The record gives the reactivity of an RNA of 177 nucleotides to 2A3 and DMS.

RNA sequence: GGGAACGACUCGAGUAGAGUCGAAAAAAGCACAGAGAACACCCAAGGGUGCUAACGUAGCUCCCCCUGGUCUCUUGUAUCUGUGCUACAGUAAAUCUGAUCUGUACCUCUGCAUUUGGGGAGUCCCAUGUGGACGAGGAUUCGUCCUCGUCCACAUAAAAGAAACAACAACAACAAC
Reactivity to 2A3 in 0.01 (KOAc 150mM, MgCl2 10mM, bicine 150mM(pH8.5), 24C), signal-to-noise 6, nucleotides 027 to 126: a000a000g000c020a010c000a000g010a000g000a120a010c000a020c030c000c020a020a020g010g000g010u010g000c000u020a180a090c170g230u160a010g010c010u080c000c000c000c020c000u020g010g010u060c050u010c000u130u110g020u020a030u010c000u000g000u010g020c000u010a010c010a000g040u090a030a110a200u140c120u110g060a050u070c010u020g030u040a050c010c000u000c000u040g020c080a300u030u090u200g010g010g000g000a020g030u000c000c000c010
Reactivity to DMS in 0.01 (KOAc 150mM, MgCl2 10mM, bicine 150mM(pH8.5), 24C), signal-to-noise 4, nucleotides 027 to 126: a080a020g020c010a000c000a000g000a020g020a080a050c140a130c300c000c000a050a110g010g000g010u000g020c000u010a100a150c300g040u000a020g020c020u010c270c030c000c030c030u020g000g000u000c100u040c130u000u000g050u000a120u020c000u050g000u000g000c000u010a010c060a010g000u020a050a130a140u080c160u000g020a080u020c030u000g010u010a240c070c010u000c010u000g000c050a090u020u040u000g070g000g000g000a180g010u000c010c000c010
Record summary:
For 2A3 the reverse transcriptase was SuperScript II with manganese. The RNA was probed in 150 mM KOAc, 10 mM MgCl2 and 150 mM bicine (pH 8.5) at 24 C.